[RMDB]
RNA sequence: GGGAACGACUCGAGUAGAGUCGAAAAGAAGGAUAGUUCGCUAUCCUUCAAACCCACCGAAAGGCAAAUGUGUUAGAUGCCCUCUAACACAUAAACCGCGCAAAACAGUACCGUUCGCGGUACUGAACAAGACUACGGAGUUCGCUCCGUAGUCUUGAAAAGAAACAACAACAACAAC
Reactivity to 2A3 in 0.01 (KOAc 150mM, MgCl2 10mM, bicine 150mM(pH8.5), 24C), signal-to-noise 2, nucleotides 027 to 126: g000a010a000g000g010a010u000a010g000u040u020c060g000c100u010a000u000c000c000u000u000c000a000a010a000c010c000c000a020c020c040g150a140a050a010g030g000c030a140a130a050u010g010u000g000u000u000a000g000a020u260g060c010c040c000u000c000u010a000a000c000a000c000a000u010a000a030a000c000c010g020c010g010c140a020a060a020a120c000a030g000u020a000c000c010g020u030u090c240g000c030g070g010u000a000c000u000g000a030a010
Reactivity to DMS in 0.01 (KOAc 150mM, MgCl2 10mM, bicine 150mM(pH8.5), 24C), signal-to-noise 2, nucleotides 027 to 126: g000a070a000g000g000a000u000a000g010u000u040c230g020c000u000a020u000c010c010u000u000c000a020a090a150c000c000c000a100c260c200g000a030a090a030g000g010c030a080a250a050u000g000u010g000u000u000a000g010a040u030g000c240c220c060u000c000u000a000a000c000a000c000a000u000a000a160a100c010c010g000c180g000c290a050a050a090a090c000a000g000u000a000c000c000g060u000u010c220g060c020g090g000u000a000c000u000g030a030a050

Conditions: 150 mM KOAc, 10 mM MgCl2 and 150 mM bicine (pH 8.5), 24 C. Chemical mapping of a 177-nucleotide RNA with 2A3 and DMS. DMS adducts were read by reverse transcription with MarathonRT. For DMS, 1,172 sequencing reads were counted.